Record summary:
Chemical mapping of a 177-nucleotide RNA with DMS and 2A3.
RNA sequence: GGGAACGACUCGAGUAGAGUCGAAAACAUCGACACUUCGUCGGUCUCCGGUUUUCCGACCCGUCCCCCGUCGGAAACCGGAUGGUAGCGGUAGUCUCAUUCCCCUCUCCGGGCUGCCGCUGUGUAGUACAGCUACAGUCUUCGGACUGUAGCUGUAAAAAGAAACAACAACAACAAC
Reactivity to DMS in 0.01 (KOAc 150mM, MgCl2 10mM, bicine 150mM(pH8.5), 24C), signal-to-noise 3, nucleotides 027 to 126: c090a040u010c010g000a010c000a120c240u030u020c120g020u000c000g010g020u020c030u010c010c000g010g000u000u000u000u000c000c000g010a020c010c170c110g000u010c010c000c010c030c280g000u000c000g010g000a000a000a000c000c000g010g000a000u020g000g030u000a010g020c000g020g020u000a010g010u010c000u030c110a230u000u010c000c000c020c190u000c070u020c110c100g000g020g000c000u000g000c000c010g000c000u000g000u020g000u010a100g030
Reactivity to 2A3 in 0.01 (KOAc 150mM, MgCl2 10mM, bicine 150mM(pH8.5), 24C), signal-to-noise 2, nucleotides 027 to 126: c030a020u010c010g000a010c070a010c200u220u190c230g010u000c010g000g000u000c040u010c000c000g020g000u020u010u140u040c000c000g000a010c010c010c060g110u040c020c010c000c000c000g010u010c000g000g000a000a010a000c010c000g000g000a010u010g020g100u050a000g000c020g010g010u030a010g010u020c030u010c120a070u040u070c000c000c050c000u050c000u020c030c030g010g000g000c000u010g000c000c010g000c010u010g020u040g010u020a140g050
For DMS the reverse transcriptase was MarathonRT.